[RMDB]
RNA sequence: GGGAACGACUCGAGUAGAGUCGAAAAUGGAAUUCGCCCCUGUUCCAGAGAUGAUUUGUGUGAUUCGAAUCGAAUUUUCGAGAACUCUGUACUUCGCUCGGAACUGGUUUAGUACAGUGCAUCAUCAGCAGGGAUGCAUCUUCGGAUGCAUCCCUGCAAAAGAAACAACAACAACAAC
Reactivity to 2A3 in 0.01 (KOAc 150mM, MgCl2 10mM, bicine 150mM(pH8.5), 24C), signal-to-noise 1, nucleotides 027 to 126: u150g010g000a030a030u150u130c070g140c010c010c010c050u000g000u010u000c120c000a000g100a010g000a070u210g000a000u010u200u110g060u000g000u190g070a060u080u000c000g000a000a000u060c000g000a050a190u160u000u000u150c000g020a070g090a230a100c000u080c000u020g050u050a010c080u000u080c020g000c190u190c020g100g070a120a060c050u060g020g000u000u040u070a000g000u000a000c000a020g000u000g190c080a070u010c100a000u120c050a010